[RMDB]
RNA sequence: GGGAACGACUCGAGUAGAGUCGAAAAGAGUUCGGUUGGAGCGACAAGUAUUUAGCUUGAGAUAGCUAAAUCACCUCGGUAUGAUUCGGGUGAGACCUAGGAACCGUAGGGGUAUUCUCAAAGGAAGGUUACCGAACAACCUUCGGGUUGUUCGGAACAGUCUAGUCAACUUCGGUUGACUAGACUGAAAAGAAACAACAACAACAAC
Reactivity to 2A3 in 0.01 (KOAc 150mM, MgCl2 10mM, bicine 150mM(pH8.5), 24C), signal-to-noise 2, nucleotides 027 to 156: g070a010g010u030u080c060g020g030u030u070g060g020a050g000c030g040a030c030a080a030g010u050a030u020u050u000a010g000c000u000u040g000a010g010a090u120a020g000c000u000a020a000a000u010c010a040c000c020u090c070g000g000u110a060u210g110a160u120u110c010g000g000g000u040g060a050g010a010c030c000u040a070g040g000a030a050c050c020g080u070a040g010g010g010g000u030a090u150u070c070u010c000a020a130a010g040g030a050a000g030g030u120u060a080c010c000g010a000a010c000a000a010c010c000u030u030c080g040g000g000u000u000g000u010u020c000g000g000a010a000
Reactivity to DMS in 0.01 (KOAc 150mM, MgCl2 10mM, bicine 150mM(pH8.5), 24C), signal-to-noise 1, nucleotides 027 to 156: g000a130g010u000u010c020g020g020u010u000g020g020a180g000c060g020a050c050a000a030g040u000a050u000u000u000a030g030c010u000u000g000a290g010a150u000a000g010c000u000a020a020a050u010c000a050c020c020u000c060g020g020u000a070u000g000a170u000u000c000g000g000g040u000g000a130g020a110c030c030u010a170g010g020a040a050c040c050g050u000a050g000g000g000g060u000a040u000u000c020u000c000a110a050a110g000g010a070a020g020g020u000u000a140c000c000g010a020a020c020a000a010c000c000u000u000c300g040g010g020u000u000g020u000u020c010g010g000a020a140
This 207-nucleotide RNA was probed chemically with 2A3 and DMS. Source: RMDB library M2RFPK, as collected in RNAgym. 2A3 adducts were read by reverse transcription with SuperScript II with manganese. The 2A3 profile rests on 1,116 reads. For DMS, 2,040 sequencing reads were counted. The reactions ran in a buffer of 150 mM KOAc, 10 mM MgCl2 and 150 mM bicine (pH 8.5), at 24 C.